[RMDB]
RNA sequence: GGGAACGACUCGAGUAGAGUCGAAAAUAUGUCUCAUUACAGAUACAAGGUUGGGUGGUAGAGAGAUUGAAGGAAGUUGCAAGUGACCUAAUAGCUAAUUUACAGUUACGGAAGUUGAAUGGUAGCAUUUUAACUUGUGUCAAGGGCUGCCCUGUCAUAAAUUAAUUUAUUUCGAUAAAUUAAUUUAAAAAGAAACAACAACAACAAC
Reactivity to DMS in 0.01 (KOAc 150mM, MgCl2 10mM, bicine 150mM(pH8.5), 24C), signal-to-noise 1, nucleotides 027 to 156: u010a080u000g000u000c010u020c050a120u010u000a120c120a080g000a110u000a110c020a100a050g010g030u030u000g010g030g000u000g020g050u050a090g000a100g000a100g000a130u000u010g020a090a080g000g000a050a180g040u000u000g020c050a030a070g050u000g020a060c020c010u020a020a120u000a140g010c030u010a080a090u000u000u000a050c130a050g020u000u000a050c030g020g000a020a070g000u010u020g010a050a050u000g030g030u020a050g010c030a040u030u010u010u000a000a060c000u000u010g020u000g010u000c060a060a150g000g010g020c040u000g000c020c080c120u000g000u020c000a150